[RMDB]
Chemical mapping of a 177-nucleotide RNA with DMS and 2A3. For DMS the reverse transcriptase was MarathonRT. Values are in units of 0.01, from 0 to 300, in steps of 10. Source: RMDB libraries RFM100 and RFMREP, as collected in RNAgym.
RNA sequence: GGGAACGACUCGAGUAGAGUCGAAAAGGUUUUGGUCCUUGGUAUUUUGUUUUAGUCCUUGUAAAAUUGAUUCAUAUUGGAUUUGGUCAUUGUAAUAUGUAGAAUAUUUGAUUUUAGUCCCUCAAAAAUAAUACUUUAUGUUCGCAUAAAGUAUUAUAAAAGAAACAACAACAACAAC
Reactivity to DMS in 0.01 (KOAc 150mM, MgCl2 10mM, bicine 150mM(pH8.5), 24C), signal-to-noise 5, nucleotides 027 to 126: g000g010u000u010u010u010g010g010u010c020c030u000u010g010g010u010a030u010u000u010u000g000u000u000u000u010a070g000u000c010c020u000u000g010u020a040a020a050a060u000u010g000a080u000u010c020a040u010a050u010u000g010g010a060u000u010u010g000g000u010c030a050u010u010g010u010a020a020u010a020u000g000u020a100g000a090a050u010a020u000u010u000g010a050u000u000u000u000a080g000u000c010c000c010u030c070a020a050a060a070
Reactivity to 2A3 in 0.01 (KOAc 150mM, MgCl2 10mM, bicine 150mM(pH8.5), 24C), signal-to-noise 3, nucleotides 027 to 126: g060g000u050u090u120u220g060g020u100c060c030u020u040g080g000u100a160u050u120u020u020g070u010u050u000u060a020g010u040c020c050u010u040g100u090a000a090a040a100u030u070g050a020u070u020c040a010u020a060u060u090g100g000a040u150u000u080g010g000u060c010a000u040u020g040u050a060a000u030a060u110g020u060a010g010a080a020u060a060u100u030u070g020a040u040u000u020u020a040g020u040c000c020c000u090c050a190a040a000a000
Description:
Conditions: 150 mM KOAc, 10 mM MgCl2 and 150 mM bicine (pH 8.5), 24 C. 2A3 adducts were read by reverse transcription with SuperScript II with manganese.